[RMDB]
RNA sequence: GGGAACGACUCGAGUAGAGUCGAAAAGAUAUGGAGACGAACUACAGUUGAGGUGCCGAAGAACAUGCAUUCACAUCGGAAACGAUGUGAAUGCAUGGGAGGCACGCAGACUGCGUCUCCUAAGUCAGUUAAAAAAAUAGUUCGCUAUUUUUUUAACAAAAGAAACAACAACAACAAC
Reactivity to 2A3 in 0.01 (KOAc 150mM, MgCl2 10mM, bicine 150mM(pH8.5), 24C), signal-to-noise 1, nucleotides 027 to 126: g040a000u080a060u260g010g010a040g030a020c000g020a140a050c260u300a140c300a000g000u000u030g060a070g060g040u020g000c010c030g250a300a070g030a100a050c000a010u010g000c000a020u020u000c020a020c000a000u040c000g070g000a130a120a070c040g010a000u000g020u010g000a010a000u010g050c000a000u000g000g000g000a010g030g020c030a000c000g000c000a000g020a000c000u000g010c000g000u000c020u000c020c000u010a010a000g010u020c050a030
Reactivity to DMS in 0.01 (KOAc 150mM, MgCl2 10mM, bicine 150mM(pH8.5), 24C), signal-to-noise 3, nucleotides 027 to 126: g020a040u000a300u030g010g000a050g000a030c020g000a160a050c100u000a300c010a020g000u010u010g010a300g000g000u000g010c000c000g000a120a150g010a160a210c020a000u020g020c000a010u000u010c000a020c030a020u000c000g010g000a140a110a230c000g010a010u000g020u000g000a000a010u000g000c000a000u000g020g000g000a130g000g020c000a000c010g010c030a300g010a010c010u000g000c000g000u000c000u000c000c000u010a000a060g020u000c050a170